[RMDB]
RNA sequence: GGGAACGACUCGAGUAGAGUCGAAAAGCUUAAUAACCUGCGCUGAGCCCUUCUCCCCCAGCUUGCCAGUGUCCUAGGGAAUUGGAAGGUCAUCCUUCACAGGAUCGUGUGGAAGUCCUGCUCGGGGUCCAAACAUGGUAAUUCGUUACCAUGUUAACAAAUUGUUAAGCUUCGGCUUAACAAUUUGAAAAGAAACAACAACAACAAC
Reactivity to DMS in 0.01 (KOAc 150mM, MgCl2 10mM, bicine 150mM(pH8.5), 24C), signal-to-noise 2, nucleotides 027 to 156: g010c040u000u000a090a120u000a090a060c020c010u020g050c080g020c040u010g020a060g010c030c000c050u000u000c050u000c010c040c030c000c030a110g010c040u000u000g000c030c040a060g040u010g020u000c030c020u000a130g010g020g010a080a090u000u010g010g020a050a080g010g020u000c060a090u000c000c000u000u010c070a100c060a070g000g010a050u000c040g000u000g080u000g020g010a100a100g010u010c010c010u000g000c000u000c020g020g000g030g020u000c050c020a090a030a040c000a020u000g010g020u000a010a080u000u010c270g030u000u000a000c030c010a020u000g000u010u000a060a150
Reactivity to 2A3 in 0.01 (KOAc 150mM, MgCl2 10mM, bicine 150mM(pH8.5), 24C), signal-to-noise 2, nucleotides 027 to 156: g000c010u130u160a160a000u130a200a180c030c030u110g040c040g030c080u080g060a070g000c000c020c010u100u100c070u100c010c010c000c020c000a010g010c020u030u090g040c010c010a030g000u010g060u090c010c010u050a080g020g040g040a060a090u080u060g010g040a040a030g020g020u050c030a060u120c020c030u050u090c040a020c000a060g030g020a050u030c060g020u070g000u040g120g030a020a030g040u020c010c000u020g020c010u000c040g010g010g000g000u020c030c000a020a000a000c000a000u000g010g000u020a030a020u030u050c090g030u040u000a010c000c020a010u000g000u010u000a020a000
Overview
Source: RMDB library M2RFPK, as collected in RNAgym. An RNA of 207 nucleotides, treated with DMS and 2A3 and read out base by base. DMS adducts were read by reverse transcription with MarathonRT. The RNA was probed in 150 mM KOAc, 10 mM MgCl2 and 150 mM bicine (pH 8.5) at 24 C. 2A3 adducts were read by reverse transcription with SuperScript II with manganese. For DMS, 4,625 sequencing reads were counted.